This 177-nucleotide RNA was probed chemically with DMS and 2A3. The reactions ran in a buffer of 150 mM KOAc, 10 mM MgCl2 and 150 mM bicine (pH 8.5), at 24 C. The DMS profile rests on 1,625 reads.

[RMDB]
RNA sequence: GGGAACGACUCGAGUAGAGUCGAAAAAGACUUCGCUUGCGCCGAAAGCAUCACAAAUAUUUCUGUGUUGCUAGUACUGGCUUUUCAUGGUGUGGGGAUGGGGAAGGCAACAGUAGAAUAGGUAGGCCGCAGUACGCCUAUUCGUAGGCGUACUGCGAAAAGAAACAACAACAACAAC
Reactivity to DMS in 0.01 (KOAc 150mM, MgCl2 10mM, bicine 150mM(pH8.5), 24C), signal-to-noise 1, nucleotides 027 to 126: a010g020a130c050u010u000c020g000c000u010u000g040c100g000c000c000g000a070a080a020g000c010a000u060c000a090c040a020a070a110u000a140u020u010u030c040u050g000u000g020u020u000g030c000u000a150g020u000a020c080u000g000g000c000u030u000u100u020c100a080u000g000g000u020g040u000g000g000g000g000a070u050g000g000g030g000a130a030g050g000c050a030a060c030a080g090u000a140g020a050a030u010a090g000g000u000a130g000g030c000
Reactivity to 2A3 in 0.01 (KOAc 150mM, MgCl2 10mM, bicine 150mM(pH8.5), 24C), signal-to-noise 3, nucleotides 027 to 126: a000g070a030c030u050u050c030g000c060u070u180g000c000g010c000c000g090a060a000a000g000c020a020u100c000a000c020a020a120a150u280a250u110u240u120c110u000g010u000g010u010u000g050c000u000a010g050u070a050c090u030g070g000c000u070u080u040u110c060a100u100g030g010u040g060u110g050g010g000g020a030u110g000g000g050g000a050a000g070g010c010a080a040c020a130g140u060a000g050a040a060u060a080g020g090u030a020g050g020c080